[RMDB]
RNA sequence: GGGAACGACUCGAGUAGAGUCGAAAAUCGAUCAUCCGGACGGUGCCGGACUUCGAGCGCAUCACGAUCGAAUGGGUGGUGCAGCCGCCGGGGUAGUAACGCACUCCCUUGAGCAGGUCGCCGUCGGACUCGAGCUCCGUUUCGACGGAGCUCGAGUAAAAGAAACAACAACAACAAC
Reactivity to 2A3 in 0.01 (KOAc 150mM, MgCl2 10mM, bicine 150mM(pH8.5), 24C), signal-to-noise 1, nucleotides 027 to 126: u170c000g000a000u110c030a040u010c000c000g300g070a150c000g000g000u000g000c000c010g070g040a170c040u190u120c000g000a000g090c000g000c040a050u090c000a010c070g150a230u090c130g050a070a300u080g010g000g120u080g000g000u030g000c010a090g040c000c000g000c060c110g000g000g000g000u150a030g000u090a300a040c080g070c130a000c010u050c030c000c000u110u030g080a110g030c060a110g000g000u290c010g000c000c000g110u000c000g000g000
The record gives the reactivity of an RNA of 177 nucleotides to 2A3. Conditions: 150 mM KOAc, 10 mM MgCl2 and 150 mM bicine (pH 8.5), 24 C.